[RMDB]
RNA sequence: GGGAACGACUCGAGUAGAGUCGAAAAAUUAAUCACUCCUUUGGGGUACCAGUGGUGAUAUGGACAACUGAGGAUAAAAAGCUAACAAGUGCUGUGCAAGUCUGGACAAGGAAGCAUGGGAACUUACCAGAACUGCAUCUAUUACAUACCGGCACCCACAGAACGUUAAGUUCGCUUAACGUUCUGUAAAAGAAACAACAACAACAAC
Reactivity to DMS in 0.01 (KOAc 150mM, MgCl2 10mM, bicine 150mM(pH8.5), 24C), signal-to-noise 2, nucleotides 027 to 156: a120u010u010a130a100u000c070a080c050u000c020c020u010u000u000g050g010g010g010u000a010c020c020a050g020u020g020g000u000g000a090u000a120u000g030g020a110c040a100a080c080u010g000a080g000g010a150u000a040a080a110a080a090g000c040u000a070a090c050a130a140g000u000g030c050u000g020u000g000c030a010a070g000u000c020u000g000g020a120c010a060a060g030g030a130a060g010c060a140u000g010g010g000a090a110c010u000u000a020c000c000a020g010a020a050c040u000g030c010a060u010c090u000a050u000u010a030c060a060u000a040c050c000g010g020c010a050c020c020c030
Reactivity to 2A3 in 0.01 (KOAc 150mM, MgCl2 10mM, bicine 150mM(pH8.5), 24C), signal-to-noise 5, nucleotides 027 to 156: a000u130u110a050a040u080c050a030c060u080c010c010u050u060u080g030g000g010g010u050a170c020c040a050g020u050g050g060u050g030a080u060a070u140g040g010a020c020a050a010c080u070g030a030g020g010a030u130a070a140a030a000a000g050c070u060a060a050c060a140a010g030u030g070c040u060g030u030g010c020a070a000g000u000c010u020g000g060a150c080a100a010g070g070a070a020g080c060a060u130g050g010g030a030a020c000u020u020a020c010c000a010g010a030a010c010u010g000c000a020u010c040u080a110u060u150a070c050a040u100a080c010c000g040g000c040a040c010c000c010
An RNA of 207 nucleotides, treated with DMS and 2A3 and read out base by base. For 2A3 the reverse transcriptase was SuperScript II with manganese. For DMS the reverse transcriptase was MarathonRT.